[RMDB]
About this RNA
The data come from the RNA Mapping Database (RMDB), library VIROID. This 207-nucleotide RNA was probed chemically with 2A3.

RNA sequence: GGGAACGACUCGAGUAGAGUCGAAAACCUUUGGCUACUACCCGGUGGAAACAACUGAAGCUUCAACGCCUUUUUUUCCUAUCUUCUUUAGCACCGGGCUAGGGAGUAAGCCCGUGGAACCUUAGUCUUGUUCCCUCGGGACUUACUUGUGGUUCCUCAUAACGCCAUUGUUCGCAAUGGCGUUAUGAAAAGAAACAACAACAACAAC
Reactivity to 2A3 in 0.01 (KOAc 150mM, MgCl2 10mM, bicine 150mM(pH8.5), 24C), signal-to-noise 2, nucleotides 027 to 156: c010c000u010u040u050g040g000c040u080a020c000u020a000c130c040c040g010g030u040g020g140a220a080a030c030a030a040c080u060g040a100a020g020c020u100u180c110a150a120c130g100c010c100u090u000u040u040u070u030u090c040c020u100a170u150c020u110u070c010u020u140u130a090g010c060a000c040c040g010g010g000c020u020a000g030g010g000a010g000u000a010a010g000c000c000c000g010u010g010g040a010a000c000c040u090u090a070g050u130c030u150u090g020u000u020c020c000c040u040c010g000g000g060a060c000u010u000a010c000u000u050g010u030g030g070u020u010c000c000u000